[RMDB]
RNA sequence: GGGAACGACUCGAGUAGAGUCGAAAAAAAGUCAUCGCCAUUUCAACAGCAAUCGUUGCAGUAGGAUACAUUGGUUUAAGCUUAAUUAUCCGAGGUAUUGCAUAUUUAACAACAAGACGAAACCUUGGUGUUUGUAAAGGUUCGCCUUUACAAACACAAAAGAAACAACAACAACAAC
Reactivity to DMS in 0.01 (KOAc 150mM, MgCl2 10mM, bicine 150mM(pH8.5), 24C), signal-to-noise 3, nucleotides 027 to 126: a050a020a080g010u010c050a060u010c080g000c040c020a060u010u000u000c050a090a070c140a100g010c050a100a060u000c150g030u010u010g000c040a080g030u000a120g000g000a040u000a020c180a060u000u000g020g010u010u010u020a080a130g000c060u000u010a050a070u000u000a030u000c000c000g020a090g010g010u000a050u010u000g010c010a090u010a110u010u000u010a060a070c060a050a070c100a020a050g000a070c060g010a050a050a050c070c050u000u000g010
Reactivity to 2A3 in 0.01 (KOAc 150mM, MgCl2 10mM, bicine 150mM(pH8.5), 24C), signal-to-noise 2, nucleotides 027 to 126: a000a000a000g080u000c030a060u080c100g020c040c010a050u070u100u110c080a080a040c040a030g020c030a030a090u130c050g110u050u060g000c030a020g010u090a000g030g010a000u030a030c050a050u090u020g060g100u140u300u170a140a050g020c020u050u200a060a000u070u050a060u000c010c020g030a040g080g000u090a100u050u100g030c050a000u050a020u130u210u130a050a000c060a020a000c020a030a040g050a020c030g100a130a020a010c000c000u040u080g080
Source information: This 177-nucleotide RNA was probed chemically with DMS and 2A3. The reactions ran in a buffer of 150 mM KOAc, 10 mM MgCl2 and 150 mM bicine (pH 8.5), at 24 C. DMS adducts were read by reverse transcription with MarathonRT. For 2A3, 1,395 sequencing reads were counted.